[RMDB]
RNA sequence: GGGAACGACUCGAGUAGAGUCGAAAAGAUAAUAAUAAAGAAACGAUAGGUGUUAAAUAAAGAGACAUUGUUGCAUCAGAGACACCAACUGACUUCACAAUAUAAGCAAGCAAAACGUAUGGAAUUACAUCUAAGCGCAUUUCGAUGCGCUUAGAUGAAAAGAAACAACAACAACAAC
Reactivity to DMS in 0.01 (KOAc 150mM, MgCl2 10mM, bicine 150mM(pH8.5), 24C), signal-to-noise 2, nucleotides 027 to 126: g000a030u000a060a080u080a170a090u010a030a060a040g000a150a060a070c090g000a090u030a060g050g000u000g000u060u020a020a030a070u010a030a050a050g010a170g000a080c050a060u050u000g000u010u000g000c040a100u070c040a010g000a090g000a030c010a000c140c000a120a060c120u020g000a130c010u000u000c070a030c030a060a070u020a150u000a040a030g000c100a010a090g000c150a060a010a020a030c090g000u010a040u020g010g000a000a210u000u080a040
Reactivity to 2A3 in 0.01 (KOAc 150mM, MgCl2 10mM, bicine 150mM(pH8.5), 24C), signal-to-noise 2, nucleotides 027 to 126: g030a010u180a090a000u120a010a000u140a000a300a000g110a030a040a000c060g030a100u050a100g010g020u080g000u150u170a170a070a090u160a080a110a040g030a000g030a000c000a090u090u160g020u040u100g050c030a020u110c060a000g010a000g040a100c010a000c110c040a000a070c040u070g050a070c030u090u020c020a030c020a050a010u210a040u040a230a000g060c070a030a020g000c060a090a070a050a030c010g010u140a060u010g000g020a040a030u030u000a000
This 177-nucleotide RNA was probed chemically with DMS and 2A3.
Values cover nucleotides 27 to 126.